RNA sequence: GGGAACGACUCGAGUAGAGUCGAAAAGAUAAGAAAUUUAGCGCCGACGGGCAGAUUGAUUAUCAACUGGAUGUGAUGACCGCCGCCGUGGGCUGGUUUGGCGAUACGUUGCUGACCAACGGUGCAACUAGUAUACAUGAUUCGUCAUGUAUACUAGAAAAGAAACAACAACAACAAC
Reactivity to 2A3 in 0.01 (KOAc 150mM, MgCl2 10mM, bicine 150mM(pH8.5), 24C), signal-to-noise 8, nucleotides 027 to 126: g040a070u240a100a080g070a070a190a040u140u180u100a110g010c040g010c010c020g040a030c060g010g000g010c030a010g070a110u060u100g040a040u080u270a100u270c010a020a040c030u050g070g050a060u080g050u030g030a030u030g030a020c010c010g000c010c000g000c010c010g020u070g020g150g000c070u060g030g000u110u180u230g010g000c000g000a010u050a100c040g030u020u030g000c010u020g040a060c000c000a040a040c010g010g000u010g010c000a010a010
Reactivity to DMS in 0.01 (KOAc 150mM, MgCl2 10mM, bicine 150mM(pH8.5), 24C), signal-to-noise 9, nucleotides 027 to 126: g000a140u010a070a090g000a140a090a110u010u010u000a190g020c050g030c020c020g020a080c300g000g010g010c020a030g000a080u000u000g010a180u000u000a070u000c010a050a070c070u000g010g010a100u010g020u000g010a050u000g000a090c040c010g020c030c020g010c020c020g010u010g010g010g020c170u010g010g000u000u000u010g040g010c020g010a040u000a040c100g020u000u000g010c020u000g000a110c030c020a100a260c040g010g010u000g010c060a090a190

Annotation:
Source: RMDB library OK2TST, as collected in RNAgym. An RNA of 177 nucleotides, treated with 2A3 and DMS and read out base by base. The RNA was probed in 150 mM KOAc, 10 mM MgCl2 and 150 mM bicine (pH 8.5) at 24 C.